[RMDB]
RNA sequence: GGGAACGACUCGAGUAGAGUCGAAAAAUGAUACUGGAUAGUAGAAUGAGGUGUCACGGUCUCUACUAUCUAGUAUCAGUAUGACAGGUAGACUAGAUUGUGAUACCUCAUGUCUAUCCGUCGUAAAGUAACUGUAUGUAUUCGUACAUGCAGUUACAAAAGAAACAACAACAACAAC
Reactivity to DMS in 0.01 (KOAc 150mM, MgCl2 10mM, bicine 150mM(pH8.5), 24C), signal-to-noise 9, nucleotides 027 to 126: a070u020g000a060u020a030c090u020g010g000a010u000a010g000u020a060g010a080a030u000g000a030g000g010u010g010u010c060a040c030g000g000u000c020u000c070u010a120c000u000a010u000c000u000a050g010u010a010u010c080a080g010u000a030u020g000a010c030a040g000g010u000a000g000a180c150u010a080g000a020u000u000g010u010g000a070u010a040c030c010u000c010a020u000g000u000c010u000a000u000c010c020g010u000c060g010u010a050a080a110
Reactivity to 2A3 in 0.01 (KOAc 150mM, MgCl2 10mM, bicine 150mM(pH8.5), 24C), signal-to-noise 9, nucleotides 027 to 126: a000u110g010a000u010a020c010u020g000g000a000u000a000g010u000a010g050a110a030u050g010a010g040g020u080g060u090c030a010c030g040g010u010c020u010c000u040a060c000u000a000u000c000u000a000g000u000a000u000c000a000g010u000a050u140g010a000c010a010g000g010u000a000g000a020c030u010a010g000a040u010u050g020u020g050a030u040a040c000c000u000c010a020u060g010u000c000u000a010u010c000c020g010u010c010g030u090a060a080a060
Source: RMDB library OK1LIB, as collected in RNAgym.
Structure probing data (DMS and 2A3) for a 177-nucleotide construct.
High DMS reactivity at an A or C suggests that its Watson-Crick edge is free.
For 2A3, 83,946 sequencing reads were counted.